RNA sequence: GGGAACGACUCGAGUAGAGUCGAAAACCGUAGGUGAAUUGAAUCAGCUUGGAUUUAUGGGUCACAGUGUCUUCGAAAGAGGACAUCACAGCCCAUUGUCAGCUGAUGAUUCACCUAAACGGAAACAUGUAUCUAGAGUUCGCUCUAGAUACAUGAAGAGCGUAAGACCUUUCGAGGUCUUACGCUCAAAAGAAACAACAACAACAAC
Reactivity to 2A3 in 0.01 (KOAc 150mM, MgCl2 10mM, bicine 150mM(pH8.5), 24C), signal-to-noise 2, nucleotides 027 to 156: c000c000g040u000a000g000g000u010g020a030a010u050u090g050a070a010u020c010a000g020c030u110u300g080g020a100u290u270u070a000u030g000g000g030u170c040a010c010a060g000u020g000u000c010u010u000c000g030a030a090a060g000a010g020g000a000c000a000u010c040a010c040a000g000c000c000c020a010u000u010g000u010c000a000g000c000u000g010a000u000g000a000u010u000c000a000c000c000u010a080a000a000c000g070g070a140a120a000c000a000u000g010u010a000u000c000u000a000g000a000g050u010u190c300g100c130u010c000u000a000g000a020u000a030c000a010u000g000a020a000

This 207-nucleotide RNA was probed chemically with 2A3. For 2A3, 1,249 sequencing reads were counted. Conditions: 150 mM KOAc, 10 mM MgCl2 and 150 mM bicine (pH 8.5), 24 C. It was measured as part of the RMDB library RNAMAK. 2A3 adducts were read by reverse transcription with SuperScript II with manganese.